[RMDB]
RNA sequence: GGGAACGACUCGAGUAGAGUCGAAAAGGUCUUACGUCAGCCAUGAGAACAACGGUAACUCUCAUGGUGGUCACAGAGAUGUGACUACGCUGACCAUCUAAGUUACCGCUUGUUAGAUGGUAAGACAGAUUACCCGCAUCUUCGGAUGCGGGUAAUCAAAAGAAACAACAACAACAAC
Reactivity to 2A3 in 0.01 (KOAc 150mM, MgCl2 10mM, bicine 150mM(pH8.5), 24C), signal-to-noise 1, nucleotides 027 to 126: g130g040u010c020u060u070a040c050g050u000c010a020g050c010c010a010u050g010a050g060a210a000c010a010a000c000g000g020u010a000a010c000u030c020u000c120a070u110g070g000u010g010g000u000c000a010c000a020g030a010g010a120u080g080u050g060a040c030u060a040c120g120c090u080g060a000c010c000a030u030c030u140a060a000g010u020u010a030c020c000g030c100u000u010g000u020u000a010g000a030u040g050g010u040a080a010g020a000c000a000
Reactivity to DMS in 0.01 (KOAc 150mM, MgCl2 10mM, bicine 150mM(pH8.5), 24C), signal-to-noise 1, nucleotides 027 to 126: g030g010u000c010u000u020a050c100g000u030c060a200g010c100c050a030u000g020a120g010a050a040c020a060a020c000g010g000u000a010a000c020u000c060u010c050a010u000g000g000u000g000g020u010c000a000c000a040g000a280g020a210u010g000u000g000a000c000u010a010c120g010c110u010g000a070c120c030a010u000c090u010a040a000g020u000u000a000c000c010g000c210u000u000g000u000u000a040g000a050u000g030g010u000a040a090g020a010c000a100